RNA sequence: GGGAACGACUCGAGUAGAGUCGAAAAAGCACGCAGGACGGCUCUCGUUAAACGGAUGGGUUUCUCAAAUCCCACAAUGAUUACCAAUAUUGGCAGGCAUUCAGAAAGAGUGAUCAUGGAGGUAGAUACACCACUGCUAGUAGUGACCUUUAGUCCGCCAACUGUCAACGUUCGCGUUGACAGUUGGAAAAGAAACAACAACAACAAC
Reactivity to 2A3 in 0.01 (KOAc 150mM, MgCl2 10mM, bicine 150mM(pH8.5), 24C), signal-to-noise 2, nucleotides 027 to 156: a000g090c050a010c080g030c010a060g000g030a030c030g030g000c000u000c000u060c010g080u080u220a130a270a040c060g070g020a100u140g010g020g000u000u060u000c140u040c050a080a200a070u040c000c040c010a010c050a020a090u080g060a070u050u090a050c010c040a050a030u100a060u150u040g000g040c020a000g040g000c020a020u050u080c020a060g080a100a090a010g060a050g000u060g000a030u070c000a000u040g030g030a010g020g060u020a010g020a050u060a030c030a020c050c010a050c070u080g000c020u010a000g030u030a040g010u010g100a130c000c000u070u060u120a020g030u000c010c030g000